The data come from the RNA Mapping Database (RMDB), library TTRDES. Structure probing data (DMS and 2A3) for a 177-nucleotide construct. For DMS the reverse transcriptase was MarathonRT. For 2A3 the reverse transcriptase was SuperScript II with manganese.
RNA sequence: GGGAACGACUCGAGUAGAGUCGAAAAGAUAUGGAAAGUUCUCGGCUCCGAGAGAAUAGGUCGGAAACGACCUAUUGGAAUGGAGCGAGAGACUUUCCUAAGUCAAACAGUGUCUUCGGACACUGAACACUUAUACACUGUUCGCAGUGUAUAAGUGAAAAGAAACAACAACAACAAC
Reactivity to DMS in 0.01 (KOAc 150mM, MgCl2 10mM, bicine 150mM(pH8.5), 24C), signal-to-noise 9, nucleotides 027 to 126: g000a040u010a300u010g010g010a020a010a010g010u010u000c000u000c000g030g020c000u000c000c000g010a130g020a300g000a020a010u000a010g000g010u000c000g010g000a130a080a250c000g010a010c000c000u000a000u000u000g010g010a300a200u010g000g010a010g010c000g010a020g000a050g010a030c000u000u000u000c000c000u000a020a090g010u010c030a150a140a280c010a000g010u000g010u000c000u000u020c270g020g000a010c000a010c000u000g000a110a280
Reactivity to 2A3 in 0.01 (KOAc 150mM, MgCl2 10mM, bicine 150mM(pH8.5), 24C), signal-to-noise 6, nucleotides 027 to 126: g020a030u090a040u200g000g010a020a010a000g040u170u050c010u000c030g300g110c020u000c010c050g080a120g010a010g020a150a000u010a010g010g000u000c010g020g040a090a060a080c010g010a000c000c000u000a000u000u000g020g050a040a080u120g000g010a010g000c000g010a020g000a010g000a000c000u000u000u000c000c000u000a080a010g060u030c070a110a060a130c000a020g000u010g000u000c020u050u140c300g160g010a000c000a000c000u000g000a050a000